[RMDB]
RNA sequence: GGGAACGACUCGAGUAGAGUCGAAAAUACCACCUCAUUUUUUAGGUUUCUGGAACAGAUAGUGGUACCUAUGAAUGCAGUAUAGAUGAAGAAGCUGUUAUGAUAUACGAAAUUACAGUCGAUGAUGCGGUACCGCUAAUUUCGAUUAGCGGUACCGAAAAGAAACAACAACAACAAC
Reactivity to 2A3 in 0.01 (KOAc 150mM, MgCl2 10mM, bicine 150mM(pH8.5), 24C), signal-to-noise 3, nucleotides 027 to 126: u170a020c000c000a090c010c000u040c020a050u070u110u030u000u010u140a050g000g020u060u120u000c070u090g130g020a230a030c000a050g210a170u300a020g090u080g020g020u050a040c000c000u010a000u050g070a030a010u010g000c140a010g010u040a020u110a110g200a100u160g070a120a130g050a110a000g050c000u000g010u080u050a030u030g130a010u000a010u030a280c150g070a140a090a000u010u040a000c000a000g030u030c090g060a120u180g060a020u150g140
Reactivity to DMS in 0.01 (KOAc 150mM, MgCl2 10mM, bicine 150mM(pH8.5), 24C), signal-to-noise 2, nucleotides 027 to 126: u030a160c040c000a130c030c070u000c070a010u000u020u000u060u080u050a050g030g000u000u000u000c000u030g000g000a160a090c150a000g000a010u010a030g050u020g010g010u020a010c030c000u000a050u000g000a030a050u000g000c070a060g040u000a140u000a110g000a060u000g030a070a120g010a050a160g020c000u000g000u000u020a040u000g000a260u020a100u030a070c230g000a090a040a100u000u000a000c000a040g000u000c080g020a180u020g000a120u030g000
Annotation: Chemical mapping of a 177-nucleotide RNA with 2A3 and DMS. The reactions ran in a buffer of 150 mM KOAc, 10 mM MgCl2 and 150 mM bicine (pH 8.5), at 24 C. The data come from the RNA Mapping Database (RMDB), library OK1LIB. The DMS profile rests on 1,518 reads. For DMS the reverse transcriptase was MarathonRT.